[RMDB]
RNA sequence: GGGAACGACUCGAGUAGAGUCGAAAACACGUCAACGGCUACUUCCGGACGUUAUCCGUCCGGUCUGAGCUCGAGACCGUCCCUGCCGAUCGGGACGCCCGUCGGUGGCUACCGCGGUUGACAGGGCGAUCAUAUCCCCGUUCGCGGGGAUAUGAUCAAAAGAAACAACAACAACAAC
Reactivity to DMS in 0.01 (KOAc 150mM, MgCl2 10mM, bicine 150mM(pH8.5), 24C), signal-to-noise 3, nucleotides 027 to 126: c080a110c190g020u000c030a020a300c300g000g000c020u000a060c020u000u000c000c000g010g000a000c000g000u010u020a080u030c300c000g010u000c000c000g000g010u000c020u000g020a080g020c020u000c000g010a300g040a030c010c200g000u000c000c000c000u010g010c000c010g010a010u000c020g000g000g010a180c300g000c020c000c010g010u030c170g010g020u000g020g000c040u010a230c070c020g000c010g030g030u010u000g000a030c000a040g000g010g020c260
Reactivity to 2A3 in 0.01 (KOAc 150mM, MgCl2 10mM, bicine 150mM(pH8.5), 24C), signal-to-noise 2, nucleotides 027 to 126: c040a010c020g010u020c030a030a030c000g000g020c000u070a070c020u300u000c010c000g020g000a000c010g040u070u130a080u110c060c020g010u000c010c000g000g040u050c050u070g030a000g020c000u010c020g000a000g000a010c000c020g080u110c010c000c000u000g000c000c000g040a080u050c030g010g010g050a030c030g000c000c010c000g200u200c130g130g190u210g040g000c010u060a090c040c000g190c010g090g000u020u020g000a020c010a030g020g000g020c040

Annotation: The record gives the reactivity of an RNA of 177 nucleotides to DMS and 2A3. The DMS profile rests on 1,654 reads. The RNA was probed in 150 mM KOAc, 10 mM MgCl2 and 150 mM bicine (pH 8.5) at 24 C. The 2A3 profile rests on 2,587 reads. It was measured as part of the RMDB library OK2TST.